[RMDB]
RNA sequence: GGGAACGACUCGAGUAGAGUCGAAAAGCUACUACUACUCAACGCAUUUAUUGUGCGCGGUAGACCGGUGGGCGGCAUUCAACAUUAAGUCAGCUCGAAGUCAAACAAAACCCGCGCCGUUGCGCGGCUUUCACUACCUGUUCGCAGGUAGUGAAAGAAAAGAAACAACAACAACAAC
Reactivity to DMS in 0.01 (KOAc 150mM, MgCl2 10mM, bicine 150mM(pH8.5), 24C), signal-to-noise 2, nucleotides 027 to 126: g010c030u010a060c040u000a140c020u000a040c000u000c010a140a050c030g000c010a020u000u000u000a110u010u000g010u000g010c000g040c080g000g000u000a020g010a100c120c140g000g000u010g000g020g020c030g010g050c000a120u000u000c200a070a070c200a100u010u020a090a060g010u000c060a160g010c000u000c030g000a080a050g010u010c070a070a100a080c150a020a060a090a210c220c020c030g000c050g010c000c300g010u000u000g000c030g020c010g000g010
Reactivity to 2A3 in 0.01 (KOAc 150mM, MgCl2 10mM, bicine 150mM(pH8.5), 24C), signal-to-noise 2, nucleotides 027 to 126: g020c010u090a020c000u000a010c000u010a010c010u070c060a120a030c030g000c000a050u000u170u140a280u220u300g040u070g010c020g000c020g050g000u040a030g020a060c050c140g010g050u120g050g020g000c010g030g000c010a020u100u200c020a120a110c040a130u070u260a140a030g090u050c010a030g030c000u010c020g050a110a000g030u010c010a160a000a110c000a050a050a120a040c000c000c000g000c000g000c000c020g050u070u120g040c020g000c000g070g000